[RMDB]
Description
An RNA of 177 nucleotides, treated with DMS and 2A3 and read out base by base. Source: RMDB library OK1LIB, as collected in RNAgym. The 2A3 profile rests on 2,967 reads.

RNA sequence: GGGAACGACUCGAGUAGAGUCGAAAAUUUGACCGCGGUGGUGCCGAUGUCGAUGCCGAUUGUGGCGUCUUCACGUGACACGGGCGCCACGGUACGCCAGCAUGGACACCCGUGAGGUCUCGACCGCGCACCAAAAUGGUUUCGACCAUUUUGGUGCAAAAGAAACAACAACAACAAC
Reactivity to DMS in 0.01 (KOAc 150mM, MgCl2 10mM, bicine 150mM(pH8.5), 24C), signal-to-noise 1, nucleotides 027 to 126: u040u020u020g000a060c020c000g000c020g000g000u000g020g010u070g000c050c000g010a090u020g090u040c080g020a030u000g010c080c020g050a150u050u000g000u020g000g000c000g000u000c000u010u040c160a210c250g050u000g000a000c090a110c190g050g010g000c000g000c000c000a010c000g000g000u010a040c070g050c120c050a170g010c000a080u020g000g000a000c000a040c100c040c080g010u010g000a180g050g000u000c010u000c110g000a130c000c040g000c160
Reactivity to 2A3 in 0.01 (KOAc 150mM, MgCl2 10mM, bicine 150mM(pH8.5), 24C), signal-to-noise 4, nucleotides 027 to 126: u160u050u120g010a030c030c010g000c030g010g020u180g010g010u040g080c010c020g130a070u010g020u010c010g050a060u040g010c020c020g110a090u100u160g020u020g020g000c030g000u000c000u100u150c110a170c120g110u160g090a060c100a050c130g010g000g000c020g000c010c000a000c000g000g000u070a090c010g010c050c010a000g030c030a030u060g080g000a050c030a030c000c020c020g020u030g090a090g000g020u020c030u010c060g090a080c020c050g020c010